[RMDB]
RNA sequence: GGGAACGACUCGAGUAGAGUCGAAAAAUGCGCCGCUAGUUUCGACGGUUAAAUGUGAGGUCAGCGGAUGUACCUAUUCAGCUGAUUUUGGUGGUAUGGCAACCCUGCAGUAUGUGUCGGACCGCGAGAUCGGGCUUAAUUUCGAUUAAGCCCGAUCAAAAGAAACAACAACAACAAC
Reactivity to DMS in 0.01 (KOAc 150mM, MgCl2 10mM, bicine 150mM(pH8.5), 24C), signal-to-noise 2, nucleotides 027 to 126: a060u010g030c100g020c000c020g050c060u010a040g000u010u010u000c030g010a060c030g030g000u000u000a070a140a100u000g010u000g020a070g020g000u000c020a010g020c010g030g020a030u010g000u000a140c210c150u000a080u000u000c000a040g010c020u000g020a030u000u000u000u000g000g060u000g000g000u000a040u000g000g000c040a080a120c050c040c020u000g000c040a070g020u000a050u000g000u000g010u000c040g020g000a120c040c020g020c070g000a140
Reactivity to 2A3 in 0.01 (KOAc 150mM, MgCl2 10mM, bicine 150mM(pH8.5), 24C), signal-to-noise 1, nucleotides 027 to 126: a030u110g020c050g020c000c010g000c060u040a030g060u030u040u040c010g040a050c000g000g020u080u060a050a190a060u190g050u090g050a020g020g050u040c000a000g010c000g010g000a020u010g030u110a150c030c010u030a060u010u040c030a030g010c030u040g000a080u010u010u130u130g100g020u020g000g070u040a080u100g020g000c010a000a040c000c000c040u050g030c030a020g000u210a040u280g100u020g070u090c010g020g020a000c010c000g010c010g030a050

Description:
Chemical mapping of a 177-nucleotide RNA with DMS and 2A3. The data come from the RNA Mapping Database (RMDB), library OK2TRN. The RNA was probed in 150 mM KOAc, 10 mM MgCl2 and 150 mM bicine (pH 8.5) at 24 C. 2A3 adducts were read by reverse transcription with SuperScript II with manganese. The DMS profile rests on 1,902 reads.